[RMDB]
RNA sequence: GGGAACGACUCGAGUAGAGUCGAAAAAUGUUGGUGAUAGUGCGGAAGUUGCAGUUAAAAUGUUUAAAAAAAACUUUUAACGUACCAAUGGAAAAACUCAAAACACUAGUUGUAACUGCAGAAGCUGAAAGCAUCUAGUUCGCUAGAUGCAAAAGAAACAACAACAACAAC
Reactivity to 2A3 in 0.01 (KOAc 150mM, MgCl2 10mM, bicine 150mM(pH8.5), 24C), signal-to-noise 2, nucleotides 027 to 129: a020u200g010u080u050g010g020u080g060a040u090a120g070u010g030c030g000g020a100a010g010u030u010g000c000a020g000u000u010a000a000a000a000u230g010u010u020u130a180a090a020a010a000a000a000a000c000u040u000u000u000a000a000c000g010u020a050c000c000a000a030u070g070g060a100a020a040a020a010c050u080c050a000a050a000a000c010a060c000u040a030g020u000u000g040u010a050a040c040u120g040c010a040g040a150a030g040c030u020g060a090a050a030
Reactivity to DMS in 0.01 (KOAc 150mM, MgCl2 10mM, bicine 150mM(pH8.5), 24C), signal-to-noise 1, nucleotides 027 to 129: a010u050g030u000u060g020g010u020g030a150u030a060g060u000g020c070g000g000a190a100g040u030u000g020c160a100g060u000u040a010a000a010a010u080g000u010u030u080a010a000a000a000a000a000a000a000c030u000u000u000u000a020a010c020g010u000a140c300c090a040a070u030g010g020a030a080a080a080a010c100u050c080a080a100a090a050c040a020c020u020a070g030u000u000g000u000a000a000c090u000g000c090a090g020a000a000g000c040u040g060a100a120a070
Overview: Structure probing data (2A3 and DMS) for a 170-nucleotide construct. The RNA was probed in 150 mM KOAc, 10 mM MgCl2 and 150 mM bicine (pH 8.5) at 24 C. For DMS the reverse transcriptase was MarathonRT. It was measured as part of the RMDB library 15KLIB.